[RMDB]
RNA sequence: GGGAACGACUCGAGUAGAGUCGAAAAGAUUCGUCGGUGAGCCCGCUCGAGGCCCGGGUUACCGCUACCGAGGCAUCGGUAAUGGCCUGCUCGUAGCGCAGCCGAACGCCGCCCGGCUCGGCUUGGGCUCCCCACGUAAUUUCGAUUACGUGGGGAGAAAAGAAACAACAACAACAAC
Reactivity to 2A3 in 0.01 (KOAc 150mM, MgCl2 10mM, bicine 150mM(pH8.5), 24C), signal-to-noise 5, nucleotides 027 to 126: g060a060u100u080c040g010u010c020g060g050u070g040a020g030c020c020c010g030c040u070c040g040a040g020g040c040c060c010g000g010g000u040u100a070c050c010g000c020u030a030c020c050g040a050g060g080c060a120u050c050g000g030u080a140a150u140g110g040c010c020u030g000c020u040c050g140u120a030g000c010g000c070a010g010c000c010g030a080a010c080g010c020c020g030c000c010c000g020g000c010u010c020g040g000c010u050u240g030g020g030
Reactivity to DMS in 0.01 (KOAc 150mM, MgCl2 10mM, bicine 150mM(pH8.5), 24C), signal-to-noise 3, nucleotides 027 to 126: g000a090u020u010c040g010u000c080g000g000u000g010a050g020c040c020c020g000c090u020c030g010a030g000g000c100c060c000g010g010g000u010u050a110c200c070g000c060u000a010c010c040g020a050g020g000c300a120u010c020g000g010u020a060a050u040g000g000c100c040u020g020c000u030c080g020u010a090g010c070g000c050a100g000c010c000g000a100a090c170g030c080c170g000c040c000c040g000g000c030u010c000g000g010c030u000u000g010g010g020